RNA sequence: GGGAACGACUCGAGUAGAGUCGAAAAGGGUGAGACCUAGGAACCGUAGGGGUAGUCUCAAAGGAAGCUUUUGCAGUGACGCCCAUGUAAGUGGGAUAUAACAACAGAACUCGUAUGAGUAGCCUAAUAAAUCGGACCUUCUUCGGAAGGUCCGAAACUUUAAUUACCUCUUCGGAGGUAAUUAAAGAAAAGAAACAACAACAACAAC
Reactivity to 2A3 in 0.01 (KOAc 150mM, MgCl2 10mM, bicine 150mM(pH8.5), 24C), signal-to-noise 2, nucleotides 027 to 156: g050g000g010u070g030a080g050a050c020c070u090a050g050g060a020a100c090c050g060u110a040g000g030g000g000u010a020g050u080c010u000c070a020a050a010g070g030a080a010g040c010u040u050u050u120g010c050a040g000u020g020a030c060g030c020c010c000a010u030g060u090a140a050g030u000g020g030g000a020u030a000u010a080a050c020a020a010c010a000g030a070a020c010u010c050g050u170a120u190g000a010g040u030a050g070c000c010u060a160a050u160a160a140a070u030c000g020g010a000c000c020u000u010c000u000u020c060g040g000a000a000g010g020u010c000c010g000a000a000a000
Reactivity to DMS in 0.01 (KOAc 150mM, MgCl2 10mM, bicine 150mM(pH8.5), 24C), signal-to-noise 2, nucleotides 027 to 156: g010g020g010u020g010a130g010a150c040c030u000a190g010g000a070a090c030c050g040u010a080g000g010g000g030u000a060g000u000c040u000c040a070a110a190g010g000a090a070g040c050u000u000u000u010g010c010a070g000u000g010a230c120g000c050c000c010a020u000g010u000a080a150g060u020g020g000g000a060u010a050u000a210a100c040a040a130c070a050g020a070a040c020u010c020g000u020a090u000g010a050g000u000a200g010c000c020u000a020a160u010a060a120a170u000c000g030g010a020c000c050u000u000c000u000u000c250g040g010a020a030g040g000u000c030c010g000a000a000a010